Overview:
This 177-nucleotide RNA was probed chemically with 2A3 and DMS. The DMS profile rests on 2,072 reads. The RNA was probed in 150 mM KOAc, 10 mM MgCl2 and 150 mM bicine (pH 8.5) at 24 C. Values cover nucleotides 27 to 126. It was measured as part of the RMDB library RFM100. For 2A3 the reverse transcriptase was SuperScript II with manganese. For DMS the reverse transcriptase was MarathonRT.

[RMDB]
RNA sequence: GGGAACGACUCGAGUAGAGUCGAAAAUUUGUUCAUUUCCGGCAUCUUGCUGUGCACUACUUAGUACGCGCGUAGUUGCAGGCAUUCCGGGUGCAGCAACUGACGCGGAAGACUUUUCCCAGAGUGUAAAUGUCAGUCCUUUCGAGGACUGACAUUUAAAAGAAACAACAACAACAAC
Reactivity to 2A3 in 0.01 (KOAc 150mM, MgCl2 10mM, bicine 150mM(pH8.5), 24C), signal-to-noise 2, nucleotides 027 to 126: u050u010u100g040u030u060c070a020u060u020u010c040c000g070g000c010a070u050c090u050u130g020c030u030g040u050g050c030a010c040u150a040c010u010u090a030g070u040a090c070g000c000g000c030g160u010a010g000u000u020g000c030a110g160g000c000a020u040u030c030c120g120g080g000u000g010c000a000g000c000a000a000c000u070g040a050c030g010c010g000g000a050a020g040a000c000u000u000u090u000c030c000c010a010g010a030g050u100g000u030
Reactivity to DMS in 0.01 (KOAc 150mM, MgCl2 10mM, bicine 150mM(pH8.5), 24C), signal-to-noise 1, nucleotides 027 to 126: u000u040u000g000u000u000c070a100u000u000u010c000c010g000g000c010a070u040c060u060u010g000c000u050g010u050g030c080a050c040u020a070c110u000u000a040g030u010a080c030g000c090g000c080g060u000a020g000u000u000g020c000a120g000g010c010a070u010u040c110c140g030g010g000u000g000c000a040g000c010a010a020c000u000g000a050c000g000c030g000g020a050a070g010a060c060u000u010u000u000c000c000c000a200g030a030g000u010g010u010